[RMDB]
RNA sequence: GGGAACGACUCGAGUAGAGUCGAAAAGAUAUGGACCGAACUACACGUGUCCUCAGCGUUGAAAUCGGAAACGAUGGAGCUGGUGGCGCGUGCGGUCCUAAGUCAAACUGCGGCUUCGGCCGCAGAACACCACUAGUUUGUUCGCAAACUAGUGGUGAAAAGAAACAACAACAACAAC
Reactivity to 2A3 in 0.01 (KOAc 150mM, MgCl2 10mM, bicine 150mM(pH8.5), 24C), signal-to-noise 3, nucleotides 027 to 126: g020a030u080a060u180g000g000a010c020c000g000a070a020c070u230a030c210a000c010g020u000g040u080c020c000u010c010a020g000c030g300u300u060g040a040a030a010u000c010g020g000a070a060a040c020g000a020u020g020g030a010g000c000u000g000g060u050g020g000c000g000c000g010u000g000c000g010g000u010c000c000u000a060a010g030u000c030a090a070a090c010u010g000c000g000g000c010u000u150c290g180g000c000c000g000c000a000g000a000a000
Reactivity to DMS in 0.01 (KOAc 150mM, MgCl2 10mM, bicine 150mM(pH8.5), 24C), signal-to-noise 3, nucleotides 027 to 126: g000a020u010a300u000g000g010a030c000c000g000a060a040c120u010a300c010a010c010g010u000g000u010c010c010u000c010a020g000c000g000u000u010g000a070a140a010u000c000g010g000a110a090a190c010g020a020u000g000g000a090g020c000u000g000g000u000g000g000c000g000c000g020u000g020c010g000g000u000c000c000u000a010a070g000u000c030a100a110a260c010u010g000c000g010g000c000u000u010c230g020g000c020c000g010c000a000g000a090a140